[RMDB]
RNA sequence: GGGAACGACUCGAGUAGAGUCGAAAAUGCGUGAUCGCGAGGGUGUUGAACAGCAUCCAGAGGAUAUUCUCAGGAAGGCUCAAUCCGAGGAUGUGGCGUUCCUGACAGCGGGUGAUACGAUGAUCUCAACGACACAUACGGAUCUUCGACUGCGAGCUCGCGAGUUAAGGUUCGCCUUAACUCGCGAAAAAGAAACAACAACAACAAC
Reactivity to 2A3 in 0.01 (KOAc 150mM, MgCl2 10mM, bicine 150mM(pH8.5), 24C), signal-to-noise 1, nucleotides 027 to 156: u110g050c070g000u070g000a050u040c010g010c040g040a000g040g070g000u080g080u130u240g040a130a020c070a070g000c000a050u030c010c000a090g050a030g250g000a030u050a100u260u030c080u000c000a010g120g050a080a040g060g020c010u030c170a050a020u000c030c000g000a060g080g000a020u050g050u070g060g000c000g010u020u010c000c000u000g000a010c030a070g000c000g000g030g020u030g010a010u070a200c000g000a020u080g000a000u050c090u010c040a060a070c100g140a100c090a000c030a130u210a110c070g000g000a010u020c000u070u050c000g040a040c060u130g010c040g100a080g000c050